[RMDB]
RNA sequence: GGGAACGACUCGAGUAGAGUCGAAAAGACAGUUCGGUGACCACCGCCCGCACCAUCAAUGCCCAGCAAGCGGAACUGGAUUCGGCGCUGUUGGCGGCGGCCGGGUUCGGCAACACCACAGCCGAUGCCUUGGGUGACUAUUCGUAGUCACCCAAGGAAAAGAAACAACAACAACAAC
Reactivity to 2A3 in 0.01 (KOAc 150mM, MgCl2 10mM, bicine 150mM(pH8.5), 24C), signal-to-noise 4, nucleotides 027 to 126: g070a010c050a040g030u100u130c050g040g060u040g080a210c010c000a060c040c020g000c010c000c000g030c010a030c040c000a040u100c040a070a080u140g030c000c030c000a000g010c060a150a020g080c080g050g030a070a030c060u090g060g030a170u070u080c050g030g020c000g010c030u040g020u140u120g060g020c070g040g000c010g040g000c020c010g000g020g020u020u010c060g010g040c020a070a040c020a020c020c040a040c010a020g020c000c000g020a040u140g020
Reactivity to DMS in 0.01 (KOAc 150mM, MgCl2 10mM, bicine 150mM(pH8.5), 24C), signal-to-noise 2, nucleotides 027 to 126: g000a070c130a090g000u020u020c060g000g030u010g010a110c050c060a200c030c000g000c300c000c040g000c040a050c110c000a020u000c100a030a080u010g000c030c040c010a030g000c050a150a030g050c030g000g020a120a150c020u030g000g000a100u000u030c100g000g010c020g000c000u000g030u010u020g000g000c010g000g030c110g000g010c070c010g000g000g010u010u000c010g020g000c050a080a040c030a150c090c050a070c140a130g000c020c030g020a020u050g000

Overview:
Structure probing data (2A3 and DMS) for a 177-nucleotide construct. It was measured as part of the RMDB library OK1LIB. In probing experiments dimethyl sulfate is read out at A N1 and C N3, which are open when not base-paired. The reactions ran in a buffer of 150 mM KOAc, 10 mM MgCl2 and 150 mM bicine (pH 8.5), at 24 C. Values cover nucleotides 27 to 126. For 2A3, 2,441 sequencing reads were counted.